An RNA of 207 nucleotides, treated with 2A3 and read out base by base. For 2A3, 1,069 sequencing reads were counted. The reactions ran in a buffer of 150 mM KOAc, 10 mM MgCl2 and 150 mM bicine (pH 8.5), at 24 C.

[RMDB]
RNA sequence: GGGAACGACUCGAGUAGAGUCGAAAAGUCAUGCCUUCGGGCAUGACAGGUACCGAGAGGUACCCCAUAGCGUACAGCAGACUCAGACUGUACGCUAAGUAAGUGUGUGUUCAAUAAGGUCCAAUUGAACACACACUCCGUUGGACCAAGAGUGUGACCUCGGGUAUAAUUUCGAUUAUACCCGAGGAAAAGAAACAACAACAACAAC
Reactivity to 2A3 in 0.01 (KOAc 150mM, MgCl2 10mM, bicine 150mM(pH8.5), 24C), signal-to-noise 2, nucleotides 027 to 156: g000u000c000a000u010g000c010c000u090u120c210g100g000g000c000a000u000g000a000c000a000g010g000u000a000c000c000g020a040g000a020g070g000u010a000c000c010c000c000a020u030a000g020c000g020u000a010c010a000g020c040a080g130a170c090u100c120a030g070a300c020u000g000u000a000c000g020c000u010a030a000g100u060a050a010g000u000g000u020g000u000g010u020u000c000a000a000u140a250a080g130g080u120c080c000a040a020u010u000g000a000a000c010a000c000a000c010a000c010u000c000c030g090u070u060g010g030a060c040c060a140a020g070a030g100u040g040u050g070a030